[RMDB]
An RNA of 177 nucleotides, treated with DMS and 2A3 and read out base by base. Conditions: 150 mM KOAc, 10 mM MgCl2 and 150 mM bicine (pH 8.5), 24 C. Values cover nucleotides 27 to 126.

RNA sequence: GGGAACGACUCGAGUAGAGUCGAAAACACGCAGUCACCUUCGAUCACGAACACGUGCCCAACCAGCACCUAGAAGCACUGAUCGCAGAAGGAAUCAACGUCCAACCGCGGCCAGCUGCAUUGGUCACCAUUAGUACGGCUUCGGCCGUACUAAUGGAAAAGAAACAACAACAACAAC
Reactivity to DMS in 0.01 (KOAc 150mM, MgCl2 10mM, bicine 150mM(pH8.5), 24C), signal-to-noise 2, nucleotides 027 to 126: c070a100c050g000c040a030g000u000c140a120c050c030u000u000c010g000a050u000c120a100c120g000a090a070c090a070c090g000u030g000c020c010c030a110a110c160c090a130g000c060a080c010c010u000a000g000a110a060g030c010a060c070u030g000a100u000c000g060c020a030g040a050a280g000g000a020a070u010c160a080a070c190g000u010c090c000a000a300c030c060g000c000g020g020c140c040a020g020c200u010g010c020a230u000u000g060g020u000c100a150
Reactivity to 2A3 in 0.01 (KOAc 150mM, MgCl2 10mM, bicine 150mM(pH8.5), 24C), signal-to-noise 3, nucleotides 027 to 126: c020a000c040g040c010a040g060u020c010a050c030c000u080u080c080g090a090u110c060a040c210g050a080a020c090a020c110g020u070g050c000c010c020a010a080c040c060a030g020c060a040c000c010u140a100g040a240a010g020c010a000c020u010g030a030u000c010g000c030a020g020a100a070g050g060a040a030u180c100a140a090c190g050u000c010c000a030a010c030c010g000c010g000g000c000c000a070g040c140u030g010c010a020u000u070g030g010u030c030a020

The data come from the RNA Mapping Database (RMDB), library OK2TST.